[RMDB]
RNA sequence: GGGAACGACUCGAGUAGAGUCGAAAACACUACCAAGCUUGUGUUUCGAAAGGACAUGGUGGCCAGGUUAAUUGCCUCGGGUACGGUCACAACGUGAAGGAUGUUCCAAUGGGCAAUCCGCAGCCAAGCCCCUACGUGUGGUGUCCGUAAUACAGACCGGUAGUUACAAGUUCGCUUGUAACUACCGAAAAGAAACAACAACAACAAC
Reactivity to DMS in 0.01 (KOAc 150mM, MgCl2 10mM, bicine 150mM(pH8.5), 24C), signal-to-noise 2, nucleotides 027 to 156: c030a060c030u000a240c050c040a080a240g030c030u000u030g010u000g040u000u000u000c050g000a110a130a110g000g000a070c050a020u000g020g030u020g010g000c020c030a110g030g030u000u000a050a090u000u000g040c020c000u010c200g020g030g030u000a030c030g000g020u000c000a050c010a070a080c120g000u000g000a130a130g030g030a140u000g000u000u000c030c020a120a080u010g020g010g010c000a040a060u000c010c030g000c110a100g000c030c020a050a160g000c020c010c010c000u020a040c100g020u000g020u030g040g020u010g020u010c030c020g040u000a060a070u000a120c050a060g000a110c150
Reactivity to 2A3 in 0.01 (KOAc 150mM, MgCl2 10mM, bicine 150mM(pH8.5), 24C), signal-to-noise 4, nucleotides 027 to 156: c030a020c050u170a070c050c040a080a050g060c060u030u050g020u020g000u040u030u040c020g070a110a090a040g050g010a000c020a070u140g060g000u070g070g000c020c020a030g040g020u050u130a070a030u100u090g010c000c010u080c100g060g010g000u040a020c020g030g020u020c010a020c020a130a120c140g040u060g080a050a030g080g030a040u190g030u070u030c020c030a080a150u240g010g000g000c000a020a050u040c030c030g050c040a010g010c020c000a040a020g000c000c010c010c010u090a100c090g080u140g030u040g090g100u040g020u010c000c000g000u010a030a030u150a100c040a010g100a040c050
Overview
The record gives the reactivity of an RNA of 207 nucleotides to DMS and 2A3. Conditions: 150 mM KOAc, 10 mM MgCl2 and 150 mM bicine (pH 8.5), 24 C. It was measured as part of the RMDB library ARCHII. DMS adducts were read by reverse transcription with MarathonRT. For DMS, 3,566 sequencing reads were counted.